An RNA of 207 nucleotides, treated with 2A3 and read out base by base.
[RMDB]
RNA sequence: GGGAACGACUCGAGUAGAGUCGAAAAGGAAUCACAACUACUGGCUGUAGCACAGCAGCCACCACAGAGCCAGCCACACACUGGGUCUCAGCAGCUGGCAACUGUUGCCUUUAUUAGAGUGGUGGUUAGAAGAUGCCACCUGGAGCAUCAAGACAGGCUGUGGCCUGAUAUUCGUAUCAGGCCACAGAAAAGAAACAACAACAACAAC
Reactivity to 2A3 in 0.01 (KOAc 150mM, MgCl2 10mM, bicine 150mM(pH8.5), 24C), signal-to-noise 2, nucleotides 027 to 156: g060g020a000a090u100c040a020c020a130a120c070u180a060c070u040g020g040c000u030g000u030a030g070c070a000c010a090g030c010a010g000c030c000a000c010c000a010c020a040g010a000g080c000c000a010g040c050c010a100c000a000c010a040c000u050g020g060g130u030c070u010c060a030g010c000a010g000c020u030g010g010c010a070a010c010u050g000u010u050g000c000c000u240u250u100a250u130u130a050g010a020g080u080g000g030u000g010g000u020u050a010g030a100a020g010a010u050g020c000c010a030c040c030u000g030g010a060g060c020a030u080c080a110a010g000a020c020a050g060g000